[RMDB]
RNA sequence: GGGAACGACUCGAGUAGAGUCGAAAAGAUCGUCCUUUCCAAAAUUCAAUGUCAGUGGCAAGGGCACAUUACCUCAACGAAUUGCAAUAACUUUGUAACUACUUUGAACCCAACUGGGAAUGUCGGCUCAAAACCGAUCAUUCGUGAUCGGUUUUGAAAAAGAAACAACAACAACAAC
Reactivity to DMS in 0.01 (KOAc 150mM, MgCl2 10mM, bicine 150mM(pH8.5), 24C), signal-to-noise 1, nucleotides 027 to 126: g020a020u000c040g000u000c000c000u000u000u000c020c000a060a040a200a130u010u000c040a000a040u000g000u000c100a050g040u000g010g000c010a050a040g000g000g000c040a030c210a050u000u000a090c020c020u000c210a070a090c150g000a050a030u000u000g020c080a080a050u020a040a190c120u000u030u000g010u000a050a020c040u000a050c060u000u000u000g000a040a050c120c100c040a140a090c120u000g010g010g020a020a010u000g000u010c050g030g000c190
Reactivity to 2A3 in 0.01 (KOAc 150mM, MgCl2 10mM, bicine 150mM(pH8.5), 24C), signal-to-noise 1, nucleotides 027 to 126: g030a110u060c010g040u010c010c000u050u000u020c000c000a060a070a040a180u040u050c020a070a030u140g050u070c050a010g070u060g070g000c000a000a000g010g010g050c060a020c000a010u010u110a120c020c030u070c060a030a020c130g020a050a030u120u000g000c000a010a130u140a210a090c030u000u040u000g030u030a010a040c010u030a010c000u040u000u100g060a060a020c040c010c040a090a140c150u080g000g000g040a000a030u070g030u000c010g020g000c030